Structure probing data (2A3) for a 177-nucleotide construct. Values cover nucleotides 27 to 126. Source: RMDB library RFM100, as collected in RNAgym.
RNA sequence: GGGAACGACUCGAGUAGAGUCGAAAACCCCAGAAUCUGUCAGGCACCAGCCAGGCAUUGCUCAGCCCCUUUCCCUCUGGGGGAGCAAGGAGUGGUGCUGGGUUUGUCUCUGCUGGGGUUUCUCCUAGUACGGCCAACACUUCGGUGUUGGCCGUACAAAAGAAACAACAACAACAAC
Reactivity to 2A3 in 0.01 (KOAc 150mM, MgCl2 10mM, bicine 150mM(pH8.5), 24C), signal-to-noise 1, nucleotides 027 to 126: c010c000c000c020a010g030a010a190u210c080u100g140u210c040a000g000g000c030a050c000c000a030g000c000c000a050g060g000c000a040u010u050g000c000u030c000a170g080c000c000c000c000u000u140u060c000c030c020u080c020u030g000g000g000g000g000a020g060c030a050a030g060g010a050g000u100g040g050u060g140c000u010g000g000g010u130u160u110g000u000c040u000c000u020g030c010u020g000g000g000g000u000u000u010c000u000c000c030u000a040
The 2A3 profile rests on 562 reads. Conditions: 150 mM KOAc, 10 mM MgCl2 and 150 mM bicine (pH 8.5), 24 C.